[RMDB]
RNA sequence: GGGAACGACUCGAGUAGAGUCGAAAAAAUAUGCUCGACUGGCUGCCUGUCCGACAGAGCUUUUAGAUCUUCUGAUCUUUCCCUGCAGCAUAUCGCUUAUGCAUCAAGCGAUUGUCGGAUCACACAAAUGAGUUAAUAUAUUCGUAUAUUAACUCAUAAAAGAAACAACAACAACAAC
Reactivity to DMS in 0.01 (KOAc 150mM, MgCl2 10mM, bicine 150mM(pH8.5), 24C), signal-to-noise 9, nucleotides 027 to 126: a080a080u010a050u000g010c010u000c010g000a110c170u010g010g010c020u000g010c040c130u010g010u010c010c010g010a030c040a090g010a050g000c020u000u000u010u010a020g000a010u000c000u000u010c300u010g010a020u000c000u000u000u000c000c000c000u010g010c060a050g010c030a090u010a040u000c010g010c010u000u000a080u010g020c230a100u010c140a040a010g010c000g010a020u000u000g000u000c020g010g000a080u000c180a070c190a090c180a060a080
Reactivity to 2A3 in 0.01 (KOAc 150mM, MgCl2 10mM, bicine 150mM(pH8.5), 24C), signal-to-noise 6, nucleotides 027 to 126: a000a000u250a050u110g000c010u020c020g090a120c130u070g080g020c000u010g030c010c050u100g050u030c010c010g000a000c010a020g030a010g020c000u020u040u020u010a010g000a000u020c010u230u030c160u300g000a010u010c000u000u010u000c000c000c010u010g000c010a040g000c010a020u020a010u150c010g010c000u050u030a080u250g120c050a100u160c100a040a000g010c000g010a010u000u020g020u000c010g040g040a080u110c050a070c020a020c020a050a240
Conditions: 150 mM KOAc, 10 mM MgCl2 and 150 mM bicine (pH 8.5), 24 C. This 177-nucleotide RNA was probed chemically with DMS and 2A3. Values cover nucleotides 27 to 126. High DMS reactivity at an A or C suggests that its Watson-Crick edge is free. The 2A3 profile rests on 10,111 reads.